Chemical mapping of a 177-nucleotide RNA with 2A3 and DMS.
[RMDB]
RNA sequence: GGGAACGACUCGAGUAGAGUCGAAAAGAAAAUCCCGGUCCCGUCAGACAAAUCAGUGACAUGAUGGUCAUAGCGAAAGCACACGCACGAAAUCUCACUGAUGAAAAAGUGCGUGUGACCAAAAAAAGUAUUCAAGUGGUUUCGACCACUUGAAUACAAAAGAAACAACAACAACAAC
Reactivity to 2A3 in 0.01 (KOAc 150mM, MgCl2 10mM, bicine 150mM(pH8.5), 24C), signal-to-noise 1, nucleotides 027 to 126: g010a010a120a000a040u000c000c000c000g000g030u030c020c000c000g060u020c030a030g050a110c030a050a160a030u080c010a040g020u000g130a020c050a120u100g020a080u080g040g030u020c040a060u170a060g040c040g060a070a030a040g040c000a000c000a010c010g000c000a000c010g030a110a060a080u040c000u020c020a190c090u150g040a060u090g000a010a060a020a010a000g010u000g010c060g000u000g000u000g000a030c000c000a000a000a000a040a000a040a000
Reactivity to DMS in 0.01 (KOAc 150mM, MgCl2 10mM, bicine 150mM(pH8.5), 24C), signal-to-noise 2, nucleotides 027 to 126: g000a110a050a180a120u000c010c000c000g040g000u000c020c030c010g000u010c080a100g000a030c080a020a080a020u000c030a020g010u000g000a130c300a030u000g010a120u010g010g030u000c020a020u000a060g000c030g020a080a090a080g000c000a140c020a000c010g000c010a020c010g010a110a120a080u000c070u000c050a050c130u000g000a040u000g000a020a070a050a040a170g000u010g010c000g010u000g030u010g000a020c020c010a000a000a060a100a140a020a060

For 2A3, 1,416 sequencing reads were counted. Values cover nucleotides 27 to 126. Conditions: 150 mM KOAc, 10 mM MgCl2 and 150 mM bicine (pH 8.5), 24 C.